[RMDB]
RNA sequence: GGGAACGACUCGAGUAGAGUCGAAAAGGCGAGGGAGGCCACCUGGAGAGAUAUGUGGCCUUCUGUCUUGCAGCUGUCUGUUUAGGAACAAAGGGAAAGGCAGUGUUUUGCAUGACUCAGUUUCCAAGCAUAACUCUCCCAUUUGGCAUAGUGAAUAUAAUUUACCAGUAUUCGUACUGGUAAAUUAAAAAGAAACAACAACAACAAC
Reactivity to 2A3 in 0.01 (KOAc 150mM, MgCl2 10mM, bicine 150mM(pH8.5), 24C), signal-to-noise 5, nucleotides 027 to 156: g070g000c080g070a070g030g030g000a020g010g020c000c000a020c000c030u030g000g030a010g000a000g010a020u030a050u250g010u010g000g010c000c000u010u000c000u010g000u000c000u000u020g000c010a010g000c000u000g010u020c000u010g150u090u160u140a100g050g080a120a070c110a130a140a050g170g040g030a100a070a030g010g000c010a010g010u010g070u040u110u130u060g000c000a000u030g000a020c000u020c110a030g010u020u050u010c020c000a020a020g050c020a030u040a130a060c000u010c010u010c000c000c020a080u100u070u100g030g010c050a070u080a110g070u090g040a090a030u240a020
Reactivity to DMS in 0.01 (KOAc 150mM, MgCl2 10mM, bicine 150mM(pH8.5), 24C), signal-to-noise 5, nucleotides 027 to 156: g020g010c030g010a150g010g020g010a040g020g040c010c010a030c020c080u000g030g010a080g010a090g010a170u000a030u010g030u010g020g020c010c010u000u000c010u000g000u000c020u000u010g020c020a140g030c020u010g010u000c020u000g000u000u000u000a110g020g010a110a180c120a090a110a150g020g020g020a070a090a060g010g020c010a050g030u000g020u010u000u000u000g010c020a090u000g020a130c030u000c060a150g000u000u000u010c020c010a090a190g000c060a100u000a060a100c050u000c030u010c000c010c050a230u000u010u010g020g000c040a110u000a150g010u000g010a100a100u010a190
Structure probing data (2A3 and DMS) for a 207-nucleotide construct. 2A3 is a SHAPE reagent: it acylates the 2'-hydroxyl of flexible nucleotides of all four kinds. For 2A3 the reverse transcriptase was SuperScript II with manganese. The DMS profile rests on 12,488 reads. DMS adducts were read by reverse transcription with MarathonRT. Source: RMDB library OK3TST, as collected in RNAgym.